Background: An RNA of 207 nucleotides, treated with 2A3 and DMS and read out base by base. For 2A3 the reverse transcriptase was SuperScript II with manganese. For DMS the reverse transcriptase was MarathonRT.
[RMDB]
RNA sequence: GGGAACGACUCGAGUAGAGUCGAAAACUCAACGUUCGCGUUGAGAAAAUCCUAAGUCACCGUGAGGAGCUCGGGAGAUGAUAUCGGAAACGAUAUACAUCGACGAUCGAGCUCUACCCACCACGGUGAUAUGGAAAAAUACGUACUUCGGUACGUACAGGGUAUCGAGAUUCGUCUCGAUACCCUGAAAAGAAACAACAACAACAAC
Reactivity to 2A3 in 0.01 (KOAc 150mM, MgCl2 10mM, bicine 150mM(pH8.5), 24C), signal-to-noise 2, nucleotides 027 to 156: c010u010c010a020a000c010g010u020u060c290g030c000g060u010u010g000a000g020a130a050a000a020u000c000c000u030a040a040g010u030c000a000c000c000g000u010g010a070g000g000a020g020c010u000c000g000g000g000a020g000a000u010g010a000u000a000u000c010g030g020a030a020a060c010g010a000u020a010u040a240c000a020u020c010g130a190c000g010a020u000c000g000a010g050c000u000c000u000a000c000c000c020a060c010c010a000c000g000g000u000g000a000u000a000u010g010g030a010a100a010a090a050u070a000c010g020u000a000c030u050u110c210g070g000u010a010c000g000u030a060
Reactivity to DMS in 0.01 (KOAc 150mM, MgCl2 10mM, bicine 150mM(pH8.5), 24C), signal-to-noise 1, nucleotides 027 to 156: c000u000c000a000a040c000g100u000u000c270g040c060g040u000u030g000a070g000a010a170a030a200u000c010c010u000a090a190g050u010c000a130c000c000g100u000g010a220g000g000a060g040c000u000c040g030g000g000a230g000a000u000g000a050u000a050u000c020g040g000a200a120a270c010g050a000u000a030u010a080c000a010u000c000g000a130c160g000a060u000c000g030a030g000c000u000c000u000a000c030c010c050a300c120c030a040c000g030g030u000g030a000u000a090u000g010g010a000a070a090a120a300u000a050c000g080u000a060c000u000u000c240g080g030u010a010c010g020u020a000